[RMDB]
RNA sequence: GGGAACGACUCGAGUAGAGUCGAAAAUACUUUCCGGUGGCUCAACCAUGUUCCCCGGUUUUCCCAGUCGUAUUGAGCGCGACAUGCGAGCCGCCUAUUCCGAGAGAAUAGUUAAGGGGGACCCAGAGACGCCGCUAUUAUUCGUAAUAGCGGCGUCAAAAGAAACAACAACAACAAC
Reactivity to 2A3 in 0.01 (KOAc 150mM, MgCl2 10mM, bicine 150mM(pH8.5), 24C), signal-to-noise 1, nucleotides 027 to 126: u180a010c000u000u050u080c020c050g050g010u030g000g000c000u030c080a020a010c050c050a210u280g000u000u010c000c000c000c020g030g050u180u000u000u060c000c000c000a000g000u010c000g000u030a040u240u300g030a110g010c130g000c000g000a000c000a030u130g000c030g000a000g000c000c000g000c000c000u000a090u000u210c060c070g010a020g000a030g010a300a020u060a030g030u060u030a000a050g000g000g000g040g000a060c050c000c000a080g050a000

This 177-nucleotide RNA was probed chemically with 2A3. The 2A3 profile rests on 382 reads. The reactions ran in a buffer of 150 mM KOAc, 10 mM MgCl2 and 150 mM bicine (pH 8.5), at 24 C.